[RMDB]
RNA sequence: GGGAACGACUCGAGUAGAGUCGAAAAAGCACUGGUACGAUACGUCGUACCAGUGCCGUCGUUGGGAUGGAACGCAAUUAAAUACAUGUGUGACGUGUAUUUGCGAACGACGUAAUUAUUUUUCAAAAUCACGCUAUCGUGUUCGCACGAUAGCGAACACUACUCGGACCUUCGGGUCCGAGUAGUGAAAAGAAACAACAACAACAAC
Reactivity to 2A3 in 0.01 (KOAc 150mM, MgCl2 10mM, bicine 150mM(pH8.5), 24C), signal-to-noise 2, nucleotides 027 to 156: a000g010c000a000c010u000g000g000u000a000c000g000a040u030a030c160g100u020c000g000u000a000c000c000a000g000u000g000c000c010g000u000c000g000u010u030g100g060g090a200u100g150g110a100a000c010g000c060a020a060u160u210a110a040a000u020a000c000a000u030g120u040g140u180g300a150c010g000u010g000u000a030u000u020u030g000c000g020a010a010c040g010a000c000g000u020a110a000u080u170a060u040u120u000u030u080c080a120a150a060a080u170c060a080c120g020c000u000a000u020c000g000u000g000u000u050c160g020c060a000c000g040a040u000a000g000c030g000a000a000